[RMDB]
RNA sequence: GGGAACGACUCGAGUAGAGUCGAAAAGGAGCACUAUGAUAACAAAGUUGAACACUGAGACACCACAGUGGAGCAAUAUAAGAGCACAGUGGAGCACGGUGAUACCAGAGUGGAGCACAGUGACAGAGCCGAUAUAAAUGUUCGCAUUUAUAUCGGCAAAAGAAACAACAACAACAAC
Reactivity to DMS in 0.01 (KOAc 150mM, MgCl2 10mM, bicine 150mM(pH8.5), 24C), signal-to-noise 3, nucleotides 027 to 126: g010g020a040g020c010a060c060u000a050u010g000a160u010a060a130c110a060a080a130g010u000u010g010a090a080c030a030c050u000g020a110g010a180c100a060c080c090a080c020a030g000u000g000g020a110g010c050a060a040u000a090u000a080a080g010a090g000c080a040c060a020g000u000g000g000a060g000c060a060c120g000g020u000g020a070u000a080c050c030a040g020a080g010u000g010g010a080g010c070a030c050a060g020u010g000a100c120a050g000a160
Reactivity to 2A3 in 0.01 (KOAc 150mM, MgCl2 10mM, bicine 150mM(pH8.5), 24C), signal-to-noise 2, nucleotides 027 to 126: g050g010a050g050c030a020c030u060a090u190g070a100u060a190a010c060a030a040a060g060u070u090g050a050a020c030a020c030u040g020a020g080a070c030a020c090c000a000c040a040g000u040g010g050a140g060c030a040a010u120a020u030a180a040g040a000g080c010a000c020a050g070u030g040g040a010g020c010a000c050g040g000u040g010a030u020a050c000c040a010g050a000g180u080g040g000a020g020c040a000c020a050g080u070g030a020c030a080g100a050